Chemical mapping of a 177-nucleotide RNA with 2A3 and DMS. The data come from the RNA Mapping Database (RMDB), library OK1LIB.
RNA sequence: GGGAACGACUCGAGUAGAGUCGAAAAGACUGCGUGCACUUGAGACGAUAUCGAGCCGGAAAUUAAUCGAUAAUGUCUCUCGUAGUGGAUACGAUCCGGCAAGUAUCGACUACGUGUGCUCGUAGGAGCACGCGCAUAGGUUCGCCUAUGCGCGUGCAAAAGAAACAACAACAACAAC
Reactivity to 2A3 in 0.01 (KOAc 150mM, MgCl2 10mM, bicine 150mM(pH8.5), 24C), signal-to-noise 6, nucleotides 027 to 126: g070a020c000u000g000c010g010u030g020c000a000c000u050u080g010a000g000a000c010g040a040u000a000u070c010g010a010g020c000c010g000g090a080a150a050u300u260a090a150u130c010g000a000u010a040a080u130g010u000c000u020c010u060c050g000u010a000g000u010g180g000a000u000a010c000g020a040u010c000c000g000g010c040a080a030g000u000a000u010c030g060a010c000u030a020c010g070u050g000u000g010c000u000c010g000u000a000g010g000a000
Reactivity to DMS in 0.01 (KOAc 150mM, MgCl2 10mM, bicine 150mM(pH8.5), 24C), signal-to-noise 1, nucleotides 027 to 126: g000a140c000u000g000c000g000u010g050c000a020c010u000u040g000a000g000a020c010g000a120u000a000u000c000g000a090g000c000c000g000g010a270a120a080u040u020a090a170u000c030g020a000u000a000a080u010g000u000c000u000c000u000c110g130u000a030g030u000g030g010a020u050a010c000g030a180u030c000c000g000g000c050a130a170g000u010a010u000c000g000a030c000u000a000c010g060u000g000u000g000c000u000c000g060u000a040g000g000a180
The DMS profile rests on 2,304 reads. Values cover nucleotides 27 to 126. 2A3 adducts were read by reverse transcription with SuperScript II with manganese.